Structure probing data (2A3 and DMS) for a 177-nucleotide construct. Source: RMDB library OK2TRN, as collected in RNAgym. 2A3 is a SHAPE reagent: it acylates the 2'-hydroxyl of flexible nucleotides of all four kinds. For DMS the reverse transcriptase was MarathonRT. Values cover nucleotides 27 to 126. The reactions ran in a buffer of 150 mM KOAc, 10 mM MgCl2 and 150 mM bicine (pH 8.5), at 24 C. For DMS, 5,681 sequencing reads were counted.
[RMDB]
RNA sequence: GGGAACGACUCGAGUAGAGUCGAAAAGCCUGACAGAACGUAAACAGGUGCUGGUGGUCAUCGGGCGCAGCGACGAGGCCGGCGCGAAAAGCGUGCGCAAUCUGCCGGGCGUGCACAUCCUGGCGCCCUUAUAUGCACCCUUCGGGGUGCAUAUAAGAAAAGAAACAACAACAACAAC
Reactivity to 2A3 in 0.01 (KOAc 150mM, MgCl2 10mM, bicine 150mM(pH8.5), 24C), signal-to-noise 2, nucleotides 027 to 126: g050c000c000u020g020a020c020a070g070a300a070c020g030u100a130a110a010c040a040g020g020u020g020c010u040g000g040u040g040g020u030c030a070u050c070g010g030g000c070g000c020a010g050c020g040a010c040g010a060g060g040c000c000g040g000c060g000c010g040a110a040a010a040g040c020g020u080g050c020g000c020a030a070u020c020u040g000c030c000g020g000g000c010g000u070g000c040a040c000a150u050c000c020u000g040g000c000g010c000c000
Reactivity to DMS in 0.01 (KOAc 150mM, MgCl2 10mM, bicine 150mM(pH8.5), 24C), signal-to-noise 5, nucleotides 027 to 126: g010c030c000u000g020a090c080a040g010a060a100c080g010u000a060a090a140c090a090g000g000u000g010c040u010g010g040u010g010g010u000c040a060u000c100g000g000g010c010g020c030a090g020c090g020a050c040g010a120g010g020c030c020g000g000c010g010c020g020a030a070a070a120g010c100g020u000g010c040g010c070a080a150u000c040u000g000c020c030g020g000g020c050g010u000g010c120a060c100a110u000c030c020u000g020g000c020g010c010c030